Source: RMDB library OK3TST, as collected in RNAgym. Structure probing data (2A3 and DMS) for a 207-nucleotide construct. The 2A3 profile rests on 1,201 reads. Reactivities are rounded to 0.1 and cut off at 0 and 3. For 2A3 the reverse transcriptase was SuperScript II with manganese. For DMS the reverse transcriptase was MarathonRT.

RNA sequence: GGGAACGACUCGAGUAGAGUCGAAAAUCCCAAAGGUUUCGGAAUCCGAAAGGUACGGAGGAACCGCUUUUUGGGGUUAAUCUGCAGUGAAGCUGCAGUAGGGAUACCUUCUGUCCCGCACCCGACAGCUAACUCCGGACGGAAUAAAGGAAGGAGAGCUAAUUUACCGUUUCGACGGUAAAUUAGCAAAAGAAACAACAACAACAAC
Reactivity to 2A3 in 0.01 (KOAc 150mM, MgCl2 10mM, bicine 150mM(pH8.5), 24C), signal-to-noise 2, nucleotides 027 to 156: u000c000c000c000a020a060a010g070g000u000u070u020c050g040g080a140a140u040c020c020g050a040a030a030g100g000u030a030c010g020g000a000g020g090a110a090c100c030g030c000u110u160u040u050u190g000g000g000g010u030u010a060a050u020c000u000g000c000a010g000u060g300a150a040g120c000u000g000c000a000g000u000a000g030g000g000a010u090a120c010c000u080u080c060u100g030u000c000c000c010g000c000a020c000c010c000g040a190c130a010g000c010u030a020a070c010u000c010c000g000g020a010c020g010g080a030a040u110a100a050a040g040g040a020a030g040g090a070g000a010
Reactivity to DMS in 0.01 (KOAc 150mM, MgCl2 10mM, bicine 150mM(pH8.5), 24C), signal-to-noise 2, nucleotides 027 to 156: u020c000c010c000a040a070a210g040g010u000u020u030c000g000g000a170a230u010c020c010g020a130a210a070g040g030u000a050c030g030g010a220g000g000a040a100c030c010g020c140u000u000u000u000u040g030g000g020g010u000u010a040a090u000c000u000g010c040a070g050u010g010a300a200g010c010u000g000c000a040g010u000a060g010g000g030a050u000a030c090c120u000u020c100u000g040u000c110c000c000g000c130a070c040c010c020g010a080c070a120g010c030u010a140a300c010u000c010c010g030g000a090c030g040g010a060a100u000a050a230a020g020g010a160a090g000g030a200g000a190